[RMDB]
RNA sequence: GGGAACGACUCGAGUAGAGUCGAAAAGAUAUGGAAACUCUGAGCGCUCACUAUGGUCGGAAACGACCAUAAAGAACUACGCUCUGAGUUUCCUAAGUCAAAAGCCGUGAGCUUCGGCUCACGGCAACAUAUGUUCUAAGUUCGCUUAGAACAUAUGAAAAGAAACAACAACAACAAC
Reactivity to DMS in 0.01 (KOAc 150mM, MgCl2 10mM, bicine 150mM(pH8.5), 24C), signal-to-noise 6, nucleotides 027 to 126: g000a030u000a300u000g000g000a010a010a010c010u000c000u010g000a010g020c010g020c140u000c050a090c240u000a010u000g010g010u000c000g010g010a090a090a150c000g010a020c000c000a000u000a010a100a110g000a070a070c110u010a050c020g010c000u000c000u000g000a010g010u000u000u000c000c000u000a010a060g000u010c030a110a090a130a150g010c000c000g030u000g000a010g020c000u000u020c260g020g000c000u000c000a000c010g000g010c020a000a020
Reactivity to 2A3 in 0.01 (KOAc 150mM, MgCl2 10mM, bicine 150mM(pH8.5), 24C), signal-to-noise 4, nucleotides 027 to 126: g010a010u050a010u080g010g000a000a010a010c010u010c020u040g000a010g000c110g060c100u050c050a030c050u010a000u010g000g010u000c010g010g030a050a020a030c000g010a000c000c000a010u010a010a030a010g010a040a030c110u300a100c210g010c000u010c000u000g000a010g000u000u000u000c000c000u010a010a000g000u010c010a010a080a120a180g020c020c000g020u010g000a000g000c080u140u240c300g160g000c020u010c000a000c030g000g010c000a000a000
The record gives the reactivity of an RNA of 177 nucleotides to DMS and 2A3.
Source: RMDB library TTRDEL, as collected in RNAgym.
2A3 adducts were read by reverse transcription with SuperScript II with manganese.
The RNA was probed in 150 mM KOAc, 10 mM MgCl2 and 150 mM bicine (pH 8.5) at 24 C.